[RMDB]
RNA sequence: GGGAACGACUCGAGUAGAGUCGAAAAACUGGCGCGAAGCCCCGGCUGGCCAGUCGGCAACCCUCCUCCGCGGCGGGGUGCCCCGGGUGAGGACACGGCCGACUGCGACCGCAGCCGGCAAGCGCGGCUUGACGAUUGAUUUCGAUCAAUCGUCAAGAAAAGAAACAACAACAACAAC
Reactivity to 2A3 in 0.01 (KOAc 150mM, MgCl2 10mM, bicine 150mM(pH8.5), 24C), signal-to-noise 3, nucleotides 027 to 126: a010c040u080g100g010c000g000c010g070a100a020g010c040c040c010c000g000g000c010u010g000g000c000c000a010g000u000c000g000g000c000a020a060c010c000c000u000c010c000u010c010c000g000c000g000g000c040g070g190g040g130u270g030c000c000c010c000g000g010g000u020g020a010g000g020a020c050a030c140g060g000c000c000g000a000c000u000g000c030g050a120c010c050g060c040a000g000c000c000g000g000c000a010a010g010c020g000c000g040g020
Reactivity to DMS in 0.01 (KOAc 150mM, MgCl2 10mM, bicine 150mM(pH8.5), 24C), signal-to-noise 2, nucleotides 027 to 126: a110c030u020g000g020c020g000c000g000a170a140g000c100c300c040c020g000g000c000u020g010g020c020c010a010g000u010c000g010g010c000a120a090c120c010c000u010c000c040u020c000c010g050c300g000g000c020g090g060g000g000u060g010c000c000c080c000g000g000g020u000g000a020g000g000a070c080a150c300g000g000c000c010g000a000c020u000g000c100g000a090c120c040g000c110a010g000c000c020g000g000c000a060a270g000c000g050c000g000g010